[RMDB]
RNA sequence: GGGAACGACUCGAGUAGAGUCGAAAAGAUAUGGAUCCAGGUAUUAGCGAAGAACUCGGAAACGAGGGAGCUAUACCGGAUCCUAAGUCAAAAUCAGAGUGCCGUUGUUCGCAACGGCACUCUGAAAGUCGUUAAUAACGUUCGCGUUAUUAACGACAAAAGAAACAACAACAACAAC
Reactivity to 2A3 in 0.01 (KOAc 150mM, MgCl2 10mM, bicine 150mM(pH8.5), 24C), signal-to-noise 3, nucleotides 027 to 126: g030a020u070a020u120g000g000a000u010c050c090a190g000g000u040a060u180u230a160g030c030g160a300a040g040a090a080c010u000c010g020g040a070a060a060c000g000a010g020g040g010a020g010c000u000a010u010a020c010c000g020g030a010u000c000c000u000a060a000g030u010c010a020a040a020a300u060c010a000g000a000g000u000g000c000c020g060u000u030g070u100u150c300g000c200a000a000c010g000g000c020a000c010u010c010u000g000a000a000a010
Reactivity to DMS in 0.01 (KOAc 150mM, MgCl2 10mM, bicine 150mM(pH8.5), 24C), signal-to-noise 2, nucleotides 027 to 126: g000a030u010a300u030g010g000a000u000c000c000a140g040g020u000a030u000u000a020g020c010g020a090a210g000a110a130c000u000c000g010g000a090a090a240c010g000a010g020g030g000a050g010c000u000a050u000a010c000c000g000g000a000u000c010c000u000a000a050g000u010c040a070a040a100a140u000c010a000g000a020g020u000g010c000c010g010u000u010g010u000u030c210g010c000a000a010c000g010g020c000a000c000u000c010u010g000a000a020a060

Chemical mapping of a 177-nucleotide RNA with 2A3 and DMS. 2A3 adducts were read by reverse transcription with SuperScript II with manganese. It was measured as part of the RMDB library TTRDEL. The reactions ran in a buffer of 150 mM KOAc, 10 mM MgCl2 and 150 mM bicine (pH 8.5), at 24 C.